[RMDB]
RNA sequence: GGGAACGACUCGAGUAGAGUCGAAAAAUGCACUGGUUCGCCAGUGCAUGAUUACCGAGAAAGUACCACGGUAUAAAAGUGCAACCCUUGGAAACAAGGGAAUUCCGAACCGAUUCGUCGGUUCGAACCGAAUACCGUAUUUCGAUACGGUAUUCGGAAAAGAAACAACAACAACAAC
Reactivity to 2A3 in 0.01 (KOAc 150mM, MgCl2 10mM, bicine 150mM(pH8.5), 24C), signal-to-noise 2, nucleotides 027 to 126: a000u000g000c000a010c000u010g010g040u020u030c110g050c070c000a000g010u000g000c000a010u000g000a010u000u000a030c000c010g010a050g080a080a170a010g110u030a020c000c040a060c040g010g000u030a080u060a130a110a020a020g170u140g120c050a110a160c000c020c000u000u000g030g000a050a020a030c000a010a000g010g000g000a010a010u040u000c050c000g010a010a000c000c000g000a010u030u030c150g070u010c010g040g000u000u000c000g000a020a010
Reactivity to DMS in 0.01 (KOAc 150mM, MgCl2 10mM, bicine 150mM(pH8.5), 24C), signal-to-noise 3, nucleotides 027 to 126: a020u000g010c000a020c000u000g010g000u000u000c230g010c010c000a000g000u010g020c000a000u020g010a090u000u000a040c000c020g000a160g020a090a110a060g010u000a190c040c040a130c020g000g010u000a060u010a080a060a090a140g000u010g030c170a110a120c000c010c010u000u000g000g000a150a080a160c000a020a010g000g020g000a040a060u000u000c040c000g030a010a000c010c010g020a030u010u010c150g000u000c010g000g010u000u000c000g030a020a080
The record gives the reactivity of an RNA of 177 nucleotides to 2A3 and DMS. It was measured as part of the RMDB library M2PK50.